[RMDB]
RNA sequence: GGGAACGACUCGAGUAGAGUCGAAAACUCAAUGUUGGGAAUAACAUUGAAUUGAUACAAAUACCUUUUUCGGUGUAGGGAAAAACACCGAAUUGAUACAAAUACCUUUCUCAAUGUAGGGAAUAACAAAACAGGCAUCGCUUCGGCGAUGCCUGAAUCAUCUUAUAGUGUUCGCACUAUAAGAUGAAAAAGAAACAACAACAACAAC
Reactivity to 2A3 in 0.01 (KOAc 150mM, MgCl2 10mM, bicine 150mM(pH8.5), 24C), signal-to-noise 3, nucleotides 027 to 156: c000u000c000a020a020u010g010u000u030g060g080g060a140a200u160a100a040c010a020u010u020g020a060a090u080u130g100a090u130a170c060a020a180a050u130a070c030c000u000u000u000u000u000c000g020g030u010g000u010a030g020g040g060a120a160a080a050a000c000a000c000c000g000a010a010u010u010g000a000u010a030c020a000a090a020u090a060c000c010u030u110u000c040u050c040a100a140u140g020u070a060g040g030g020a000a130u080a170a030c070a030a060a020a010c010a000g000g000c000a000u010c010g060c020u070u090c240g030g000c000g000a000u000g020c000c000u000g000a000a000
Reactivity to DMS in 0.01 (KOAc 150mM, MgCl2 10mM, bicine 150mM(pH8.5), 24C), signal-to-noise 1, nucleotides 027 to 156: c010u000c050a090a130u000g050u010u000g010g030g010a180a190u000a080a040c000a010u000u000g020a040a020u010u000g000a090u000a050c010a030a200a060u020a020c010c040u000u000u000u000u000c030g040g010u000g000u000a150g040g020g010a120a080a090a180a020c000a010c000c020g030a010a010u000u000g030a040u000a020c020a070a200a080u000a010c000c030u000u010u000c100u010c010a050a040u000g040u000a060g000g000g020a090a090u000a050a110c030a040a040a150a210c010a010g020g020c010a020u000c000g070c000u000u000c300g100g000c000g000a040u020g000c000c000u000g000a010a030

The data come from the RNA Mapping Database (RMDB), library M2RFPK.
An RNA of 207 nucleotides, treated with 2A3 and DMS and read out base by base.
The RNA was probed in 150 mM KOAc, 10 mM MgCl2 and 150 mM bicine (pH 8.5) at 24 C.
For DMS the reverse transcriptase was MarathonRT.